Notes
Chemical mapping of a 177-nucleotide RNA with 2A3 and DMS. DMS adducts were read by reverse transcription with MarathonRT. The data come from the RNA Mapping Database (RMDB), library OK2TRN. For DMS, 1,995 sequencing reads were counted.
[RMDB]
RNA sequence: GGGAACGACUCGAGUAGAGUCGAAAAUGAUCGUGGACGAACUGGCGGUGGCCGACGCCCAUCCGCUGGGCACCCGGCCGUUCGAGCGCAAGCAGUACGUAGAGAAGUUCACCGAGCUCGCCGAUGGAGCAAACAAGACAUUCGUGUCUUGUUUGCUAAAAGAAACAACAACAACAAC
Reactivity to 2A3 in 0.01 (KOAc 150mM, MgCl2 10mM, bicine 150mM(pH8.5), 24C), signal-to-noise 2, nucleotides 027 to 126: u160g020a050u130c010g030u080g020g050a010c030g040a060a050c050u040g100g000c020g070g080u070g030g000c000c040g000a030c050g030c000c000c000a030u090c060c120g150c270u020g000g020g000c010a050c050c060c000g000g000c020c000g020u030u110c010g030a040g010c040g000c020a070a070g000c000a020g080u060a050c090g050u090a040g040a010g030a130a020g010u000u030c020a040c130c030g000a010g040c010u070c030g000c040c000g040a070u100g120g070
Reactivity to DMS in 0.01 (KOAc 150mM, MgCl2 10mM, bicine 150mM(pH8.5), 24C), signal-to-noise 2, nucleotides 027 to 126: u010g000a050u000c040g020u000g020g000a080c030g020a080a090c040u010g000g020c020g000g000u000g000g030c030c030g000a160c110g000c080c010c070a000u010c140c140g010c070u000g020g010g020c000a120c080c080c020g010g000c050c000g000u000u000c040g010a100g000c050g000c140a100a070g000c050a110g000u000a030c040g030u010a100g010a100g010a060a100g000u000u000c030a070c030c040g010a100g000c030u000c020g010c040c010g000a100u010g020g010